[RMDB]
RNA sequence: GGGAACGACUCGAGUAGAGUCGAAAAGCCGACUGCACGUGCGUGCGAGCAGUUUUCGAAUUCGCACGUUUCACGUAAAGACCCAACUCUACUCGAUGCGAGGGUCAGCAAGCAAGCAGCAAUAAAAUAGACGCUAUAACUUCGGUUAUAGCGUCUAAAAAGAAACAACAACAACAAC
Reactivity to DMS in 0.01 (KOAc 150mM, MgCl2 10mM, bicine 150mM(pH8.5), 24C), signal-to-noise 2, nucleotides 027 to 126: g000c060c060g020a120c080u000g020c230a040c010g050u010g020c010g010u000g010c000g050a000g010c250a080g010u000u000u020u010c210g000a030a200u000u000c000g020c000a020c010g010u000u000u000c000a010c000g020u000a120a070a070g000a080c020c010c030a130a040c010u000c000u000a000c000u000c000g020a020u020g030c050g010a090g010g010g000u010c040a040g000c040a060a040g020c050a040a040g000c030a040g000c110a100a060u000a060a060a100a070
Reactivity to 2A3 in 0.01 (KOAc 150mM, MgCl2 10mM, bicine 150mM(pH8.5), 24C), signal-to-noise 1, nucleotides 027 to 126: g070c040c030g060a080c010u050g050c050a010c000g020u000g010c000g000u030g020c000g000a020g000c060a070g050u000u040u190u300c090g050a060a120u040u000c000g040c000a010c010g000u000u090u020c000a000c000g030u000a030a020a080g010a010c040c000c000a000a010c010u070c010u020a010c000u000c010g020a060u060g030c050g050a050g030g020g000u050c010a000g000c000a090a000g020c020a050a090g030c030a030g030c010a010a100u060a190a070a040a000